[RMDB]
RNA sequence: GGGAACGACUCGAGUAGAGUCGAAAAGCAUCUAGCACUUUGGGAAUCAUACCUCCAUAAAUAUCACCAUGUUCAAUAUAUUGAUGAAUAUCGACUAAUGGCAAUUGAGGUAUAACAACAUCAUUGACCCCGGGUACUCCUUCGGGAGUACCCGGGGAAAAGAAACAACAACAACAAC
Reactivity to 2A3 in 0.01 (KOAc 150mM, MgCl2 10mM, bicine 150mM(pH8.5), 24C), signal-to-noise 1, nucleotides 027 to 126: g000c000a000u100c100u220a000g180c260a080c120u080u030u160g030g000g110a000a190u030c000a010u000a050c000c000u120c090c110a010u040a300a260a000u180a180u110c040a000c020c000a000u090g000u270u000c040a110a000u070a070u070a000u140u290g230a150u030g000a110a030u040a080u040c050g100a080c000u020a190a000u000g000g010c000a020a020u050u050g070a120g000g000u040a000u000a000a000c050a000a040c040a110u000c030a080u030u030g170a110
Background
Structure probing data (2A3) for a 177-nucleotide construct. The RNA was probed in 150 mM KOAc, 10 mM MgCl2 and 150 mM bicine (pH 8.5) at 24 C. The data come from the RNA Mapping Database (RMDB), library OK1LIB.